This 177-nucleotide RNA was probed chemically with DMS and 2A3. 2A3 adducts were read by reverse transcription with SuperScript II with manganese. For DMS, 760 sequencing reads were counted. Source: RMDB library OK2TRN, as collected in RNAgym.
RNA sequence: GGGAACGACUCGAGUAGAGUCGAAAAGACAUGACACGAGGAUCUACUAGGAUCGUACAUGUACGUAGACUAGGCAUCGAUCUAUCUAGGUACAUCACAUGGUACGUCUCAGAUGGAUCGACAUGGCGACAUUCUCUGGCUUCGGCCAGAGAAUGUCAAAAGAAACAACAACAACAAC
Reactivity to DMS in 0.01 (KOAc 150mM, MgCl2 10mM, bicine 150mM(pH8.5), 24C), signal-to-noise 1, nucleotides 027 to 126: g010a090c080a090u000g000a060c100a080c050g000a140g030g000a080u000c030u000a060c070u000a030g010g000a080u000c040g040u000a070c040a100u000g000u000a000c040g020u000a030g000a120c100u010a010g020g000c080a190u000c030g000a000u000c000u000a010u000c000u000a010g000g030u000a000c010a110u000c210a140c300a070u000g010g000u000a000c080g000u030c060u010c120a000g010a020u000g000g000a000u010c000g000a010c170a010u030g000g010c090
Reactivity to 2A3 in 0.01 (KOAc 150mM, MgCl2 10mM, bicine 150mM(pH8.5), 24C), signal-to-noise 1, nucleotides 027 to 126: g050a000c030a000u110g040a030c050a020c130g050a060g130g040a020u000c020u060a100c010u040a090g040g070a050u070c030g000u060a080c020a110u140g000u030a010c030g050u070a000g000a080c040u020a040g090g000c020a070u040c030g010a020u000c010u000a020u000c000u010a000g000g000u030a010c010a080u090c090a090c030a300u300g100g010u000a010c050g120u020c040u060c160a030g030a020u010g040g010a000u000c010g020a010c000a030u080g090g000c070